[RMDB]
RNA sequence: GGGAACGACUCGAGUAGAGUCGAAAAUUUGCCUGUGGAUGUGGGGCAUCAUAUACAGCUAAUGAUGUCGAAGUCCAAUCAUCUGGCAUGAUUAAGCCAAAUGCUCUUCUUUGUGCUACUUGCCCCUGUAGGACGCUGUUCGCAGCGUCCAAAAGAAACAACAACAACAAC
Reactivity to DMS in 0.01 (KOAc 150mM, MgCl2 10mM, bicine 150mM(pH8.5), 24C), signal-to-noise 4, nucleotides 027 to 129: u020u010u030g010c010c010u010g010u070g000g000a010u000g020u000g030g070g020g020c030a020u010c010a010u000a120u030a000c050a120g010c110u080a030a060u050g000a050u030g020u030c000g000a120a270g000u030c050c070a010a010u040c080a070u030c100u030g020g010c020a050u050g010a040u050u060a040a070g020c140c000a050a030a070u070g000c120u060c050u030u030c060u040u030u070g020u060g010c050u050a020c060u000u000g040c020c000c010c070u040g010u000a130
Reactivity to 2A3 in 0.01 (KOAc 150mM, MgCl2 10mM, bicine 150mM(pH8.5), 24C), signal-to-noise 5, nucleotides 027 to 129: u050u050u070g030c000c000u000g020u090g070g000a040u030g050u110g140g120g000g000c020a000u000c000a000u090a030u050a070c090a030g090c050u180a110a010u030g010a000u020g000u010c010g050a120a030g010u000c020c000a010a040u080c050a040u080c040u070g000g000c000a000u070g030a100u150u140a070a040g000c010c000a030a010a050u160g030c030u040c000u190u090c050u040u060u060g070u040g080c010u000a070c030u000u060g050c020c000c000c000u000g060u080a030